[RMDB]
RNA sequence: GGGAACGACUCGAGUAGAGUCGAAAAGUUUACGCUCCAAGAUCGGUGGAUAGCAGCCCUAUCAAUAUCUAGGAGAACUGUGCCAUGUUUAGAAGAUUAGGUAGUCUCUAAACAGAACAAUUUACCUCAUACGUUAGGACGUUCGCGUCCUAACGAACAGAUAAUCGGCGUUCGCGCCGAUUAUCUGAAAAGAAACAACAACAACAAC
Reactivity to 2A3 in 0.01 (KOAc 150mM, MgCl2 10mM, bicine 150mM(pH8.5), 24C), signal-to-noise 2, nucleotides 027 to 156: g000u030u080u130a090c120g010c000u010c010c010a010a020g020a060u100c110g140g180u150g110g030a010u050a020g020c030a000g060c010c000c020u010a030u000c030a070a060u030a010u180c020u060a060g010g000a000g010a020a030c010u050g030u060g090c020c000a070u020g020u010u010u010a090g000a300a010g000a020u080u020a010g000g030u010a010g040u010c000u010c000u020a000a000a000c020a020g080a070a040c080a030a030u080u070u040a010c010c000u070c080a060u110a160c020g000u010u000a000g010g000a000c010g000u030u060c220g020c000g080u000c000c000u000a000a000c000g010a000a000
Conditions: 150 mM KOAc, 10 mM MgCl2 and 150 mM bicine (pH 8.5), 24 C. An RNA of 207 nucleotides, treated with 2A3 and read out base by base.